[RMDB]
RNA sequence: GGGAACGACUCGAGUAGAGUCGAAAAGGAGCUCGAUGCUAUGUGGUAACUACACUCUAAGUUAUCACUACUUUACGUUAGUAGAGUAAAGUUAUGAGAGAGUGAUCGUAACUUAUAGCAUCGAGAAGAUAGGAGUGAGAUUCGUUUCAUUUCUAUCAAAAGAAACAACAACAACAAC
Reactivity to DMS in 0.01 (KOAc 150mM, MgCl2 10mM, bicine 150mM(pH8.5), 24C), signal-to-noise 8, nucleotides 027 to 126: g010g010a110g010c010u000c000g000a010u000g000c000u000a000u000g020u000g010g000u000a000a000c010u000a120c110a210c020u010c020u000a100a060g000u000u000a000u000c000a000c000u000a000c010u000u000u000a010c000g010u040u080a110g020u000a000g000a000g000u000a010a010a010g010u000u000a000u010g010a030g000a240g010a150g010u020g010a150u000c010g020u000a000a000c000u000u000a010u000a000g000c000a010u000c000g000a010g000a020a040
Reactivity to 2A3 in 0.01 (KOAc 150mM, MgCl2 10mM, bicine 150mM(pH8.5), 24C), signal-to-noise 9, nucleotides 027 to 126: g170g020a070g040c000u000c000g000a000u000g000c000u000a000u000g010u000g000g000u000a000a000c000u030a020c070a040c050u030c020u030a030a020g010u000u000a000u010c000a000c000u000a000c000u010u000u000a000c010g220u100u260a080g000u010a000g010a000g000u000a010a010a000g000u000u000a010u030g010a020g010a020g020a040g140u170g120a080u010c010g000u000a000a000c000u000u000a000u000a000g000c000a000u000c000g000a000g000a000a000